Description: An RNA of 177 nucleotides, treated with DMS and read out base by base.

RNA sequence: GGGAACGACUCGAGUAGAGUCGAAAAGAAGAGGAAGAGGAACACGAAGCCGACGCAAUGAGUGACACGGAGACGCUGUCCAGUUUCGGCGACGAAACGGUAUGGGUGCCUAAACACAGCACUCUGGAAGUUGUACGGCGUUCGCGCCGUACAACUUAAAAGAAACAACAACAACAAC
Reactivity to DMS in 0.01 (KOAc 150mM, MgCl2 10mM, bicine 150mM(pH8.5), 24C), signal-to-noise 1, nucleotides 027 to 126: g050a100a040g010a100g000g010a020a020g010a030g000g000a040a050c070a210c100g000a100a150g010c050c000g030a070c130g000c090a150a040u000g010a120g020u040g000a100c050a050c080g010g000a120g000a120c040g080c170u000g000u010c050c040a050g000u000u010u000c040g010g010c200g000a180c000g000a110a020a050c100g000g040u010a100u000g000g010g020u000g010c010c040u010a030a090a050c260a070c270a080g000c010a030c020u000c010u000g000g010
DMS adducts were read by reverse transcription with MarathonRT.